Chemical mapping of a 177-nucleotide RNA with DMS. The RNA was probed in 150 mM KOAc, 10 mM MgCl2 and 150 mM bicine (pH 8.5) at 24 C. It was measured as part of the RMDB library 15KREP. For DMS the reverse transcriptase was MarathonRT. Values cover nucleotides 27 to 126.
RNA sequence: GGGAACGACUCGAGUAGAGUCGAAAAACUUUAUGUCUACAAUUAUUACUUCCUGCCAAACUGCUGUUAGUAAGCUUCUAGAUACAUGUUUUGAAGCUACAGAAGCAACAUUUAACUUCUUGUUAGAGUAAAUAUGUCAGUUCGCUGACAUAUUUACAAAAGAAACAACAACAACAAC
Reactivity to DMS in 0.01 (KOAc 150mM, MgCl2 10mM, bicine 150mM(pH8.5), 24C), signal-to-noise 2, nucleotides 027 to 126: a120c060u010u000u000a070u030g020u020c040u010a090c050a070a100u000u000a050u000u000a120c130u010u000c010c010u000g030c110c080a070a090a130c180u010g020c020u000g010u020u010a060g000u010a050a080g000c010u000u000c020u000a010g010a060u010a080c200a090u010g010u000u010u010u000g010a050a010g000c010u010a020c010a050g010a130a030g000c020a030a060c170a060u010u000u000a060a080c100u000u000c070u000u000g020u000u000a070g000a160